Structure probing data (2A3 and DMS) for a 177-nucleotide construct.
The RNA was probed in 150 mM KOAc, 10 mM MgCl2 and 150 mM bicine (pH 8.5) at 24 C.
2A3 adducts were read by reverse transcription with SuperScript II with manganese.
The data come from the RNA Mapping Database (RMDB), library OK2TRN.

RNA sequence: GGGAACGACUCGAGUAGAGUCGAAAAGUUGGGAAUCGCCAACCAUGACGGCGACGGCGGGUCUUGGCCGAGCAUUGCGACCCUAGCCCGGUAUGCCAACGUAGAGCCGCGUGCCGUCAAGGCGUGCGGACUGGGUAGCGUUCGCGCUACCCAGUCCAAAAGAAACAACAACAACAAC
Reactivity to 2A3 in 0.01 (KOAc 150mM, MgCl2 10mM, bicine 150mM(pH8.5), 24C), signal-to-noise 1, nucleotides 027 to 126: g170u180u110g050g030g040a010a130u120c020g010c010c020a000a060c040c030a080u140g000a000c050g000g040c140g070a050c080g300g110c020g020g020g070u040c000u020u080g040g080c070c000g030a030g070c020a170u050u130g070c090g020a080c040c000c040u030a010g000c050c000c030g020g030u090a060u130g090c060c000a080a010c050g220u140a020g020a000g110c000c000g020c000g000u020g050c050c010g040u090c040a020a020g020g010c020g000u000g000c010
Reactivity to DMS in 0.01 (KOAc 150mM, MgCl2 10mM, bicine 150mM(pH8.5), 24C), signal-to-noise 2, nucleotides 027 to 126: g000u010u000g010g010g020a160a080u000c030g000c000c020a140a160c030c070a250u000g020a060c080g030g010c000g000a040c040g050g010c000g010g020g000u000c050u000u000g010g010c060c020g000a110g020c070a120u020u000g020c050g000a110c100c010c040u010a180g000c030c010c040g000g000u000a060u000g000c110c060a060a140c080g000u000a040g030a160g010c010c000g010c000g010u030g020c000c020g000u000c070a100a050g000g000c010g040u010g010c050